[RMDB]
RNA sequence: GGGAACGACUCGAGUAGAGUCGAAAAGGAUGAUCUGGACCCGGCCAGUAAUCCGAAUUAGUACCGGGAUUGCAUCGUCGAGCCGUCAGGGGCGAAGACGAGAACCUGAAAGCACGAAGCACGGGGCGGUGCGUGUGCGAGAUAUAACGCCCAACAAGAUACCUAGGUAGUUCGCUACCUAGGUAUCAAAAGAAACAACAACAACAAC
Reactivity to 2A3 in 0.01 (KOAc 150mM, MgCl2 10mM, bicine 150mM(pH8.5), 24C), signal-to-noise 2, nucleotides 027 to 156: g020g000a010u060g000a060u100c020u020g010g000a020c000c010c000g000g010c000c020a000g000u020a050a020u000c020c010g010a050a040u160u100a150g060u090a090c000c030g010g000g000a020u020u210g050c040a090u010c000g000u010c000g020a020g000c010c020g090u210c140a070g170g020g050g030c020g060a080a000g000a010c000g000a000g000a000a060c040c040u150g060a090a000a030g020c000a010c060g060a130a000g000c000a000c010g000g030g000g000c030g000g000u000g000c020g040u090g000u020g020c020g080a010g070a000u210a020u050a170a010c050g000c000c000c000a000a000c040a010a030
Reactivity to DMS in 0.01 (KOAc 150mM, MgCl2 10mM, bicine 150mM(pH8.5), 24C), signal-to-noise 2, nucleotides 027 to 156: g030g000a030u000g010a120u010c020u000g030g010a080c000c010c030g070g010c010c040a060g040u000a090a080u010c000c020g000a090a080u010u000a170g030u010a060c040c000g010g000g000a120u000u010g030c000a230u000c030g060u000c010g030a300g020c000c000g040u000c130a190g030g030g000g010c000g000a160a220g000a050c060g020a090g000a060a040c010c000u000g100a080a080a100g020c010a110c020g000a150a130g010c070a070c040g040g000g020g000c030g020g010u000g010c020g030u100g000u000g000c070g020a000g000a060u000a060u020a100a050c010g040c000c000c000a020a080c080a240a300